[RMDB]
RNA sequence: GGGAACGACUCGAGUAGAGUCGAAAAGGGACUGGCCCGAUUAAGCCCGGCAACCUAACUUUAUUUAAGCGUAAAGUGAAGGUGCUAAUUCCAGCAAAAUGGUGUAUUCCGUUUUGGUAGAUAAGAGAAGCGUGACAUGAGUUCGCUCAUGUCACAACUACCCCUUUAGGUUCGCCUAAAGGGGUAGAAAAGAAACAACAACAACAAC
Reactivity to DMS in 0.01 (KOAc 150mM, MgCl2 10mM, bicine 150mM(pH8.5), 24C), signal-to-noise 3, nucleotides 027 to 156: g000g030g010a110c050u000g010g010c000c000c030g010a170u000u000a100a090g010c000c030c040g010g000c010a020a040c000c000u000a130a030c000u000u010u000a020u010u000u000a190a230g040c250g010u010a000a020a040g020u000g000a100a020g010g020u000g010c010u000a060a150u010u010c010c000a050g010c030a020a030a030a010u000g000g000u030g000u000a110u010u000c000c000g030u000u010u000u010g000g010u000a040g020a080u010a080a120g000a220g000a130a100g010c140g010u000g020a000c010a010u000g010a030g020u000u010c300g030c010u010c000a000u000g000u000c010a000c000a000a080
Reactivity to 2A3 in 0.01 (KOAc 150mM, MgCl2 10mM, bicine 150mM(pH8.5), 24C), signal-to-noise 2, nucleotides 027 to 156: g010g000g010a010c000u040g060g030c000c000c000g010a040u150u030a050a020g000c000c000c000g000g030c010a090a090c010c000u010a010a000c000u050u020u000a030u040u180u130a180a070g210c070g030u000a000a030a020g000u010g070a140a030g000g000u000g000c000u000a020a030u100u100c000c020a010g040c050a080a010a000a030u050g000g000u150g020u170a080u110u000c000c000g000u000u020u010u030g080g010u090a110g060a220u240a220a050g100a040g060a120a020g060c030g080u000g000a000c000a000u000g000a010g040u030u130c170g040c090u000c000a000u000g000u010c010a000c000a000a000
Chemical mapping of a 207-nucleotide RNA with DMS and 2A3.
The RNA was probed in 150 mM KOAc, 10 mM MgCl2 and 150 mM bicine (pH 8.5) at 24 C.
DMS adducts were read by reverse transcription with MarathonRT.
For DMS, 6,816 sequencing reads were counted.